Chemical mapping of a 177-nucleotide RNA with DMS and 2A3. Reactivities are given for positions 27 through 126. 2A3 adducts were read by reverse transcription with SuperScript II with manganese. For DMS the reverse transcriptase was MarathonRT. Values are in units of 0.01, from 0 to 300, in steps of 10. Source: RMDB library TTRDES, as collected in RNAgym. DMS (dimethyl sulfate) methylates the pairing face of unpaired adenines and cytosines.
RNA sequence: GGGAACGACUCGAGUAGAGUCGAAAAGAUAUGGAGAUUAUACAGCGAGGAUCACCUGUAUCGGAAACGAUACGGUGGGAGCUGUAAUCUCCUAAGUCAAAUCCAACCGCGUUCGCGCGGUUGGAAACACUGUAGAGAUCUUCGGAUCUCUACAGUGAAAAGAAACAACAACAACAAC
Reactivity to DMS in 0.01 (KOAc 150mM, MgCl2 10mM, bicine 150mM(pH8.5), 24C), signal-to-noise 2, nucleotides 027 to 126: g000a020u000a030u030g000g000a000g000a030u020u000a140u010a110c060a030g020c000g030a100g000g000a030u010c000a000c000c000u040g000u000a000u000c000g030g000a010a010a030c000g000a000u000a010c000g000g030u000g000g010g000a010g030c000u000g010u010a010a000u000c000u000c000c000u000a010a050g010u010c000a110a170a220u000c000c010a000a010c010c010g020c000g020u010u020c280g030c020g020c000g000g000u000u000g010g000a000a070a140
Reactivity to 2A3 in 0.01 (KOAc 150mM, MgCl2 10mM, bicine 150mM(pH8.5), 24C), signal-to-noise 2, nucleotides 027 to 126: g010a010u000a010u060g010g000a010g010a010u000u090a140u100a300c050a010g000c000g090a300g050g070a040u010c000a010c000c050u170g000u000a010u010c010g000g040a010a010a000c000g010a010u000a010c010g000g000u000g010g020g020a020g000c010u000g010u000a010a010u010c010u020c000c000u010a020a010g000u000c030a070a060a190u050c010c000a010a030c010c000g030c030g030u030u070c300g040c030g020c000g230g030u000u020g000g050a000a000a000